[RMDB]
RNA sequence: GGGAACGACUCGAGUAGAGUCGAAAAACCCCACUCUGCAGGGUCCGCGUUCCAUUCUUUCUUACCUUGUGGCCGGCAUGGUCCCAGCCUCCUCGCUGGCGCCGGCUGGGCAACAUUCCGAGGGGACAACCACAAAGCUUCGGCUUUGUGAAAAGAAACAACAACAACAAC
Reactivity to 2A3 in 0.01 (KOAc 150mM, MgCl2 10mM, bicine 150mM(pH8.5), 24C), signal-to-noise 9, nucleotides 027 to 129: a010c010c000c000c000a010c020u040c010u050g010c030a040g030g030g040u030c020c040g070c030g060u060u020c030c020a100u070u040c030u080u080u010c010u060u100a120c020c020u060u060g070u130g080g020c000c000g010g010c020a090u150g040g020u110c020c010c000a020g020c000c020u090c010c000u060c050g010c020u030g020g000c030g010c020c000g010g040c010u020g010g000g000c010a070a030c010a090u130u030c020c010g000a030g000g000g000g020a000c000a020a040c010
Reactivity to DMS in 0.01 (KOAc 150mM, MgCl2 10mM, bicine 150mM(pH8.5), 24C), signal-to-noise 9, nucleotides 027 to 129: a090c110c010c000c060a000c010u000c020u040g010c060a090g010g020g030u030c030c090g040c070g030u040u030c010c010a120u020u010c050u010u030u000c030u040u020a200c080c000u010u060g030u070g000g000c070c010g000g000c000a080u000g040g020u050c210c010c000a060g020c020c020u030c070c040u050c090g010c050u000g000g000c190g040c020c030g010g020c000u020g020g020g020c000a080a070c080a120u060u060c070c030g020a090g000g000g010g000a090c080a080a090c090